[RMDB]
Source: RMDB library M2PK90, as collected in RNAgym. Chemical mapping of a 177-nucleotide RNA with 2A3 and DMS.
RNA sequence: GGGAACGACUCGAGUAGAGUCGAAAAUUAUUGAGCGUUGAUGUCUCUGUCACGAUACGAGUAAGUGACUCUCGUGUACUACUGGCGAAUGAGACAGAGACAUUAUAUGCUCGUGCCAGUCAAUAAAAUGAAUAGCUAGGUUCGCCUAGCUAUUCAUAAAAGAAACAACAACAACAAC
Reactivity to 2A3 in 0.01 (KOAc 150mM, MgCl2 10mM, bicine 150mM(pH8.5), 24C), signal-to-noise 3, nucleotides 027 to 126: u140u050a070u060u240g000a020g020c000g000u010u020g010a000u000g000u050c000u000c010u010g000u000c000a000c080g030a010u040a090c030g020a020g010u070a180a110g050u110g190a020c010u000c000u000c060g140u110g030u050a050c040u040a030c010u050g260g000c040g080a070a060u160g000a050g000a080c000a010g000a010g000a010c000a020u000u000a010u010a000u010g000c000u000c010g000u030g030c000c010a040g060u090c070a070a150u100a240a180a020
Reactivity to DMS in 0.01 (KOAc 150mM, MgCl2 10mM, bicine 150mM(pH8.5), 24C), signal-to-noise 4, nucleotides 027 to 126: u010u010a060u010u010g010a010g010c000g010u000u010g000a010u000g010u000c000u010c000u000g000u000c000a130c070g010a120u010a060c010g000a030g010u000a020a080g020u010g000a080c080u000c150u010c210g000u000g000u010a030c050u000a040c040u000g000g000c020g000a080a070u000g010a080g020a020c010a010g000a020g010a010c000a000u010u000a010u000a030u000g000c000u000c010g010u010g000c030c020a140g010u010c130a050a090u000a050a090a070

The reactions ran in a buffer of 150 mM KOAc, 10 mM MgCl2 and 150 mM bicine (pH 8.5), at 24 C. Reactivities are rounded to 0.1 and cut off at 0 and 3.